[RMDB]
RNA sequence: GGGAACGACUCGAGUAGAGUCGAAAAAACAGACGGUUCGCCGUCUGUUCUAUGCGGCUGAGGGUUUCCGGACGUGGCUUCGAUUCCCACCGCCUCCACCAAUGUAAGGAUCGUUCGCGAUCCUUAAGUAUCGGUGUAACUUCGGUUACACCGAUACAAAAGAAACAACAACAACAAC
Reactivity to DMS in 0.01 (KOAc 150mM, MgCl2 10mM, bicine 150mM(pH8.5), 24C), signal-to-noise 2, nucleotides 027 to 126: a020a010c000a010g010a000c010g020g000u000u010c250g040c010c000g010u000c000u000g000u000u010c020u010a060u010g010c030g000g010c150u010g020a120g000g000g010u000u010u000c080c050g000g000a030c050g040u020g020g010c190u000u000c000g000a100u000u000c010c000c010a190c040c040g000c000c030u000c030c030a110c130c070a100a110u020g000u010a020a010g000g000a000u000c000g000u000u020c200g060c000g000a000u000c000c000u000u000a000a060
Reactivity to 2A3 in 0.01 (KOAc 150mM, MgCl2 10mM, bicine 150mM(pH8.5), 24C), signal-to-noise 2, nucleotides 027 to 126: a000a000c010a020g030a020c000g000g050u040u040c150g030c090c000g030u010c010u000g010u010u000c000u050a080u140g030c000g000g000c060u090g190a240g030g000g020u030u030u010c210c000g030g030a050c070g220u260g180g010c080u020u020c020g040a020u010u000c030c000c010a030c010c040g000c030c000u030c010c000a140c000c020a000a170u200g080u140a060a000g000g010a000u000c010g050u040u120c260g000c000g120a000u000c010c000u000u000a000a010
Conditions: 150 mM KOAc, 10 mM MgCl2 and 150 mM bicine (pH 8.5), 24 C. This 177-nucleotide RNA was probed chemically with DMS and 2A3. The 2A3 profile rests on 1,693 reads.